[RMDB]
RNA sequence: GGGAACGACUCGAGUAGAGUCGAAAACGGUAUUGGUCAAGGCUAUACCGACAGCGCACCUUCAAAAGGGCGCUUAAUCCCCGGCCAAGCGCGGAAAUAUGAAUAGACACCGCUGGGCUGGUAGGGCAAAACAUGGCGAUCUUCGGAUCGCCAUGAAGAAUUUUGCUAAGUUCGCUUAGCAAAAUUCAAAAGAAACAACAACAACAAC
Reactivity to DMS in 0.01 (KOAc 150mM, MgCl2 10mM, bicine 150mM(pH8.5), 24C), signal-to-noise 1, nucleotides 027 to 156: c000g030g020u000a030u010u000g110g000u000c040a110a220g080g030c060u010a060u000a050c050c000g010a100c070a050g030c090g000c010a100c020c010u000u020c130a050a100a240a170g000g010g020c000g000c030u000u000a060a040u010c020c000c020c010g050g020c000c040a050a050g050c020g010c140g000g000a180a110a120u000a220u000g020a220a170u000a150g010a130c050a020c060c000g030c000u020g000g010g030c000u000g020g020u000a070g010g000g000c080a110a090a070a220c010a040u010g000g000c000g000a050u000c020u000u020c240g020g030a030u000c010g030c000c010a000u000g010a010a160
Reactivity to 2A3 in 0.01 (KOAc 150mM, MgCl2 10mM, bicine 150mM(pH8.5), 24C), signal-to-noise 2, nucleotides 027 to 156: c010g000g000u010a000u040u260g050g000u080c070a150a110g120g030c000u000a000u000a000c000c000g010a020c020a020g000c000g030c050a300c090c010u090u110c040a060a060a070a030g020g000g000c000g000c000u000u010a020a000u000c000c000c000c010g000g000c000c000a040a020g050c030g000c020g050g100a020a140a020u190a090u150g080a120a140u100a180g030a040c050a010c080c000g000c040u020g000g020g000c020u000g010g020u070a030g030g020g030c030a040a100a000a000c000a020u010g000g010c000g000a000u000c000u040u070c140g050g010a000u000c000g000c000c000a000u000g010a000a010

Source: RMDB library M2RFOK, as collected in RNAgym. Chemical mapping of a 207-nucleotide RNA with DMS and 2A3.